This 177-nucleotide RNA was probed chemically with DMS and 2A3. For 2A3 the reverse transcriptase was SuperScript II with manganese. It was measured as part of the RMDB library OK2TRN. Values cover nucleotides 27 to 126. The 2A3 profile rests on 2,138 reads. The reactions ran in a buffer of 150 mM KOAc, 10 mM MgCl2 and 150 mM bicine (pH 8.5), at 24 C.

RNA sequence: GGGAACGACUCGAGUAGAGUCGAAAACAGGAGCGUGGCCACUGCCGCCAGCUGCCGGUUGGGCCGCAGCUGACUGGGGCGCGCGGGCUCGCGGCACUGCGGACAGGGCAGUGGGAAGGGGGGCGCGUGAAGCGCUUAAUUUCGAUUAAGCGCUUCAAAAAGAAACAACAACAACAAC
Reactivity to DMS in 0.01 (KOAc 150mM, MgCl2 10mM, bicine 150mM(pH8.5), 24C), signal-to-noise 4, nucleotides 027 to 126: c110a110g000g000a120g000c100g030u000g000g010c010c020a050c020u000g010c020c010g000c060c070a030g010c190u000g010c020c020g020g010u010u010g010g000g010c000c010g010c010a130g000c030u000g010a100c170u010g020g000g010g010c040g000c150g020c020g030g010g010c000u000c070g020c000g000g010c010a030c020u000g000c020g010g000a090c060a060g010g010g010c020a010g010u000g010g000g010a090a100g000g000g000g020g000g010c060g010c150g000
Reactivity to 2A3 in 0.01 (KOAc 150mM, MgCl2 10mM, bicine 150mM(pH8.5), 24C), signal-to-noise 2, nucleotides 027 to 126: c060a030g090g040a080g050c090g030u120g030g020c020c000a120c080u030g010c000c020g040c050c020a020g040c100u020g000c020c020g080g000u260u130g070g030g000c010c010g000c030a040g010c010u040g080a170c130u170g050g040g030g130c030g000c070g010c060g050g040g000c010u020c010g050c000g000g000c020a000c030u020g020c060g000g040a050c030a040g000g010g030c000a000g000u040g000g040g050a060a060g010g000g020g000g010g010c050g000c000g060